[RMDB]
RNA sequence: GGGAACGACUCGAGUAGAGUCGAAAAGGAGUAUGGCAGGUCGGCCGCCUGCUGGGCCCGGCGCCUGGUCUUCGUCAACGGGCACGGCGGCAAUGUCGGCGCUUUGACCCGAGCGGUAGGCCUGCUGCUGCAGGCUCCGCUUCGGCGGAGCCUGCAGAAAAGAAACAACAACAACAAC
Reactivity to 2A3 in 0.01 (KOAc 150mM, MgCl2 10mM, bicine 150mM(pH8.5), 24C), signal-to-noise 1, nucleotides 027 to 126: g120g000a070g070u210a130u170g000g010c000a000g000g010u000c000g030g010c000c000g000c000c000u050g000c020u030g000g040g000c000c000c000g010g000c000g010c000c080u020g040g100u110c000u210u030c010g090u080c030a120a090c060g000g050g010c050a000c000g000g030c010g000g040c010a090a110u300g020u100c010g010g090c050g000c080u090u140u190g030a150c000c030c000g000a000g000c010g000g040u060a030g000g070c020c000u000g000c000u000g030
This 177-nucleotide RNA was probed chemically with 2A3. Conditions: 150 mM KOAc, 10 mM MgCl2 and 150 mM bicine (pH 8.5), 24 C. Source: RMDB library OK1LIB, as collected in RNAgym.